[RMDB]
RNA sequence: GGGAACGACUCGAGUAGAGUCGAAAAACGCUCAUGUCUGUCAUGACGUGAUUGCGUACUGUCCUACAGUACGCAAACCGCUUCUGUAGGACAGAGGCGUCACGUAGUCGGAGACACCGAUUAGCGAGGACAGCAUACUAUUCGUAGUGUGCUGUCCAAAAGAAACAACAACAACAAC
Reactivity to 2A3 in 0.01 (KOAc 150mM, MgCl2 10mM, bicine 150mM(pH8.5), 24C), signal-to-noise 9, nucleotides 027 to 126: a000c010g000c000u000c000a020u020g070u070c180u200g280u220c020a010u020g010a000c000g000u000g000a020u070u300g000c010g020u070a120c000u000g000u010c000c000u010a000c000a000g020u050a020c090g000c000a030a100a100c070c060g000c010u010u000c000u010g000u010a010g000g010a000c000a000g010a010g010g000c000g010u010c000a000c010g000u010a000g000u000c010g010g030a150g030a110c050a070c030c010g010a010u010u020a010g010c020g010a060
Reactivity to DMS in 0.01 (KOAc 150mM, MgCl2 10mM, bicine 150mM(pH8.5), 24C), signal-to-noise 9, nucleotides 027 to 126: a100c020g010c010u000c010a030u000g000u010c180u010g010u010c020a020u000g000a010c000g010u000g000a030u000u010g050c000g020u010a070c000u000g000u000c030c020u000a030c000a000g010u000a020c200g020c020a030a050a090c280c140g000c020u000u000c000u000g010u000a040g010g010a140c000a000g010a080g010g010c000g000u000c010a010c010g010u000a010g000u000c020g000g000a300g010a130c220a100c020c010g000a020u000u000a010g010c010g000a180